[RMDB]
RNA sequence: GGGAACGACUCGAGUAGAGUCGAAAAGAUAUGGAGAAUCAACGAUAAGUCGAUACUCGGAAACGAGUAUCGACUUUUGACGUUGACUCCUAAGUCGAACCACAUAGCUGUUCGCAGCUAUGUGGAACAUUCUCGGAGUGUUCGCACUCCGAGAAUGAAAAGAAACAACAACAACAAC
Reactivity to DMS in 0.01 (KOAc 150mM, MgCl2 10mM, bicine 150mM(pH8.5), 24C), signal-to-noise 2, nucleotides 027 to 126: g000a000u010a280u010g000g000a010g000a200a160u000c000a000a000c010g010a150u000a030a030g010u000c000g010a000u000a000c000u010c000g010g000a050a090a140c000g020a000g010u000a000u000c000g000a010c010u000u000u000u000g000a130c070g000u000u000g000a020c000u010c000c000u010a040a080g000u000c000g010a080a190c020c000a010c000a000u000a020g000c000u000g000u010u000c200g020c030a010g020c000u000a000u000g010u000g000g000a050a100

Chemical mapping of a 177-nucleotide RNA with DMS. DMS adducts were read by reverse transcription with MarathonRT. The reactions ran in a buffer of 150 mM KOAc, 10 mM MgCl2 and 150 mM bicine (pH 8.5), at 24 C. For DMS, 1,605 sequencing reads were counted. It was measured as part of the RMDB library TTRDEL.